An RNA of 207 nucleotides, treated with 2A3 and read out base by base. The RNA was probed in 150 mM KOAc, 10 mM MgCl2 and 150 mM bicine (pH 8.5) at 24 C. It was measured as part of the RMDB library M2RFPK.
[RMDB]
RNA sequence: GGGAACGACUCGAGUAGAGUCGAAAAGUUAGGUGAGGCUCCUAUGCAAACACAGGCCACUGCCCAAAAAUGUCCAAAGACGCCAAUGGGUAGAACAGGGAUUGUCUGAUUAAGGCUUUCCAUAAUGAAAACAAAGUAUGCUUCGGCAUACUUUGAAGAUUGCGUACAGGUUCGCCUGUACGCAAUCAAAAGAAACAACAACAACAAC
Reactivity to 2A3 in 0.01 (KOAc 150mM, MgCl2 10mM, bicine 150mM(pH8.5), 24C), signal-to-noise 1, nucleotides 027 to 156: g030u040u030a030g020g030u030g040a040g020g020c020u100c060c030u120a100u130g040c090a060a180a050c040a050c030a000g040g000c040c010a070c000u010g000c000c000c040a010a000a000a000a000u020g010u000c020c030a150a140a080g010a010c010g000c000c000a000a040u030g000g020g000u050a000g010a030a020c080a030g050g020g000a010u030u030g020u020c010u020g050a270u160u200a060a000g000g000c020u040u010u000c010c010a050u170a110a030u160g090a050a030a000a000c020a000a000a000g000u000a000u000g010c000u010u100c160g050g010c000a000u000a000c000u000u010u000g000a010a020